This 207-nucleotide RNA was probed chemically with DMS and 2A3. The reactions ran in a buffer of 150 mM KOAc, 10 mM MgCl2 and 150 mM bicine (pH 8.5), at 24 C. Values cover nucleotides 27 to 156. The 2A3 profile rests on 3,318 reads. Source: RMDB library RNAMAK, as collected in RNAgym.
RNA sequence: GGGAACGACUCGAGUAGAGUCGAAAAGCGUACUACGAUGCUUGGAUUUAACCUAGAGGUAUGGAAUCUAUCCCAAAUAGGAUAGGAUCCAUACUACCCACCUAGGUUUGUCAGCAUCGUAUCGCAAAAGUUCAGGAGGGUUCGCCCUCCUGAACAAACAACACAAAGGUUUCGACCUUUGUGUUGUAAAAGAAACAACAACAACAAC
Reactivity to DMS in 0.01 (KOAc 150mM, MgCl2 10mM, bicine 150mM(pH8.5), 24C), signal-to-noise 2, nucleotides 027 to 156: g010c000g020u010a050c080u000a030c000g010a010u000g030c000u020u010g040g020a050u000u000u000a020a030c010c010u000a020g010a170g000g020u000a030u000g000g020a050a060u000c010u010a000u000c000c000c010a030a170a240u010a030g000g000a020u000a010g030g010a030u000c020c000a000u000a020c000u000a020c020c000c040a300c200c000u010a020g010g000u000u010u010g010u000c010a040g000c020a010u010c000g010u000a010u010c020g030c000a100a080a070a150g000u000u020c020a010g010g000a030g020g030g020u000u000c300g010c030c000c000u000c000c000u000g030a000a000c000a080a080
Reactivity to 2A3 in 0.01 (KOAc 150mM, MgCl2 10mM, bicine 150mM(pH8.5), 24C), signal-to-noise 4, nucleotides 027 to 156: g000c000g040u130a080c080u010a010c050g000a010u010g010c030u130u210g150g000a120u300u300u150a010a000c000c000u000a000g010a000g030g000u000a000u000g010g000a040a060u010c000u000a000u010c020c020c020a240a300a270u260a110g000g000a000u000a000g020g030a000u000c000c010a000u000a000c000u000a000c010c030c000a050c000c000u010a010g000g000u000u000u010g000u000c000a000g000c000a000u010c000g010u000a000u010c000g010c000a070a170a030a000g000u010u000c000a000g000g010a000g000g040g000u040u170c230g160c000c000c000u010c000c000u000g000a000a000c000a000a000